[RMDB]
RNA sequence: GGGAACGACUCGAGUAGAGUCGAAAAAAAAAACCAAAGGUUGUCCUCGGUUGUGCCCUGAAUUUCGGAUAAAGUCCAAGUAAUACUUUUCGAUAAUCAAGAUCUGUAAAUUUCUUCGCCGGAAACUUCACCUAUUUUCUUUCGAGAAAAUAGGUGAAAAAGAAACAACAACAACAAC
Reactivity to 2A3 in 0.01 (KOAc 150mM, MgCl2 10mM, bicine 150mM(pH8.5), 24C), signal-to-noise 2, nucleotides 027 to 126: a000a000a000a000a000a030c060c020a070a080a080g020g000u070u060g050u090c000c000u020c010g040g000u000u020g000u070g010c000c000c000u000g040a120a110u030u030u050c020g000g000a010u060a130a000a060g020u050c050c060a000a000g010u000a010a160u030a230c020u040u070u020u050c040g040a070u070a140a120u180c070a140a020g000a040u000c030u030g040u060a010a060a170u000u020u030c010u060u000c000g040c030c000g040g020a010a040a060c010u030
Structure probing data (2A3) for a 177-nucleotide construct. The RNA was probed in 150 mM KOAc, 10 mM MgCl2 and 150 mM bicine (pH 8.5) at 24 C. It was measured as part of the RMDB library RFM100.